[RMDB]
RNA sequence: GGGAACGACUCGAGUAGAGUCGAAAACAUCUAUUAAACUGAAAUUAGGGCCGUGGUGGGGUUCUAAAAAGCAGUGUGGGCCUGAAAGGAGAAGCAUCCUGUUGGUGUACAGACACAGCCACCAUAGCUCCAUGAAUGAGUUCGCUCAUUCAUGGAGAAAAGAAACAACAACAACAAC
Reactivity to DMS in 0.01 (KOAc 150mM, MgCl2 10mM, bicine 150mM(pH8.5), 24C), signal-to-noise 2, nucleotides 027 to 126: c070a050u000c160u030a160u000u000a060a180a170c060u010g000a070a110a200u000u000a040g000g010g000c030c030g010u000g010g000u000g010g010g000g000u000u000c030u000a000a050a040a120a070g000c020a020g010u000g010u000g000g000g010c070c000u000g000a030a060a100g010g000a060g000a100a110g010c060a050u000c010c020u000g010u000u000g000g000u000g000u000a050c120a070g010a090c130a010c080a160g010c050c010a020c010c010a070u000a100g010

An RNA of 177 nucleotides, treated with DMS and read out base by base. Values are in units of 0.01, from 0 to 300, in steps of 10. The data come from the RNA Mapping Database (RMDB), library OK2TRN.